[RMDB]
RNA sequence: GGGAACGACUCGAGUAGAGUCGAAAAGUUAUGGAAAACGUCUUAGCUACCACUACAACAACAAUGCUGGACGGUGAUGGUUCGACUUACUGGAAACCAUCACGUAGUGGUAGUCGUUCCCAUUCAACUCCUCAUCAGAUUUCGAUCUGAUGAGGAGAAAAGAAACAACAACAACAAC
Reactivity to DMS in 0.01 (KOAc 150mM, MgCl2 10mM, bicine 150mM(pH8.5), 24C), signal-to-noise 2, nucleotides 027 to 126: g000u000u020a120u000g000g000a130a030a070a050c030g000u000c020u020u010a120g010c000u000a020c010c000a010c010u000a010c010a100a070c150a080a090c170a090a090u000g030c050u000g000g010a060c070g010g040u010g030a030u010g000g010u000u000c090g000a120c160u000u030a100c180u020g020g000a140a020a000c000c000a010u000c000a000c000g000u000a000g010u000g030g010u000a010g000u000c000g000u000u010c010c000c000a200u000u010c150a090a190
Reactivity to 2A3 in 0.01 (KOAc 150mM, MgCl2 10mM, bicine 150mM(pH8.5), 24C), signal-to-noise 4, nucleotides 027 to 126: g040u040u070a090u280g140g060a090a070a040a030c030g020u000c060u100u150a030g020c010u000a010c000c000a010c020u010a010c010a090a000c010a030a010c020a100a240u200g060c070u120g110g010a020c040g020g010u000g000a000u020g000g030u020u010c060g070a090c120u120u220a100c100u220g040g040a090a020a000c000c000a000u010c010a000c010g000u020a000g000u010g020g000u000a000g000u000c000g000u010u000c000c000c010a000u030u020c000a020a050
Structure probing data (DMS and 2A3) for a 177-nucleotide construct.
For DMS the reverse transcriptase was MarathonRT.
DMS (dimethyl sulfate) methylates the pairing face of unpaired adenines and cytosines.
It was measured as part of the RMDB library M2PK90.
The RNA was probed in 150 mM KOAc, 10 mM MgCl2 and 150 mM bicine (pH 8.5) at 24 C.
For 2A3, 5,073 sequencing reads were counted.
Reactivities are given for positions 27 through 126.